Source: RMDB library OK3TST, as collected in RNAgym. This 207-nucleotide RNA was probed chemically with DMS and 2A3. The 2A3 profile rests on 1,185 reads. High DMS reactivity at an A or C suggests that its Watson-Crick edge is free. For 2A3 the reverse transcriptase was SuperScript II with manganese. The DMS profile rests on 3,968 reads.
[RMDB]
RNA sequence: GGGAACGACUCGAGUAGAGUCGAAAACAAGGCGGGCUGUAGAGCGAGAGAUUUGGACUCGAUUUAAAUACAGACAAAAUAGUAUGCAUUUACUAACACCACAUCUCACCCCCACGAAACUUGGUAAGGGCAGCAACAGAACUUUAUCUGCCAUAUAACUAGCUCAAAAUUUCGAUUUUGAGCUAGUAAAAGAAACAACAACAACAAC
Reactivity to DMS in 0.01 (KOAc 150mM, MgCl2 10mM, bicine 150mM(pH8.5), 24C), signal-to-noise 2, nucleotides 027 to 156: c030a100a110g020g050c060g000g020g020c020u000g010u000a080g000a110g000c040g000a150g020a060g000a070u000u010u040g010g000a120c040u000c020g000a250u000u010u000a020a050a070u000a030c010a020g020a090c020a080a050a070a160u010a180g000u000a030u000g010c020a030u010u000u000a070c060u010a060a090c040a040c010c010a040c050a030u010c020u020c040a220c020c020c010c020c010a080c110g010a070a020a090c060u000u000g000g010u000a060a100g020g010g050c030a070g000c040a050a200c040a090g010a030a140c110u000u000u000a070u020c000u010g000c000c020a050u000a050u010a120
Reactivity to 2A3 in 0.01 (KOAc 150mM, MgCl2 10mM, bicine 150mM(pH8.5), 24C), signal-to-noise 2, nucleotides 027 to 156: c030a010a020g070g020c020g000g010g000c000u000g020u080a070g010a020g040c030g000a040g000a000g000a040u020u060u100g010g030a030c030u000c020g030a030u030u060u230a040a060a040u090a020c010a000g130a000c030a010a150a010a040u100a050g030u020a030u070g000c050a030u020u070u050a050c010u010a010a040c000a010c010c000a010c010a050u030c020u040c000a090c000c000c000c000c000a020c030g060a090a030a000c030u020u000g050g000u050a000a070g040g000g020c030a000g000c000a010a010c030a110g080a080a010c020u020u100u100a150u070c000u000g000c000c010a020u010a020u000a020